The record gives the reactivity of an RNA of 177 nucleotides to 2A3 and DMS. The RNA was probed in 150 mM KOAc, 10 mM MgCl2 and 150 mM bicine (pH 8.5) at 24 C. For DMS the reverse transcriptase was MarathonRT. For 2A3, 627 sequencing reads were counted. High DMS reactivity at an A or C suggests that its Watson-Crick edge is free.

RNA sequence: GGGAACGACUCGAGUAGAGUCGAAAAAUGAGGAUAACUGUAACCAAUUUAUCAAGGCUAACAUGUAUUAGAAAAAAAGAAAAACUCGUUAUCCGUCAAGUGCUUUUCAACCAUGUCAUGCUAGCCAUGACUAUCAGACGUUCGCGUCUGAUAGUCAAAAAGAAACAACAACAACAAC
Reactivity to 2A3 in 0.01 (KOAc 150mM, MgCl2 10mM, bicine 150mM(pH8.5), 24C), signal-to-noise 1, nucleotides 027 to 126: a000u080g010a050g000g000a010u020a040a000c050u060g070u120a090a050c040c030a080a110u070u210u080a160u220c130a110a030g000g000c000u040a040a000c010a000u030g110u090a090u140u120a080g160a000a110a000a000a000a020a040g260a050a170a050a020a010c000u010c000g000u000u000a010u000c010c010g040u040c110a030a030g090u050g050c030u080u020u020u000c030a030a060c050c010a050u130g030u060c020a010u020g030c000u010a000g070c000c050a040
Reactivity to DMS in 0.01 (KOAc 150mM, MgCl2 10mM, bicine 150mM(pH8.5), 24C), signal-to-noise 2, nucleotides 027 to 126: a060u010g030a300g020g000a010u030a010a000c030u000g000u000a120a290c050c050a130a070u010u000u000a120u010c130a110a110g020g020c000u000a000a000c010a000u000g010u000a050u000u000a100g000a000a040a090a030a050a040a080g000a060a030a060a050a050c070u000c030g030u000u000a040u000c050c000g000u000c100a040a090g000u020g010c040u000u000u000u000c060a040a250c120c080a050u030g000u020c000a000u000g010c030u000a010g000c050c020a140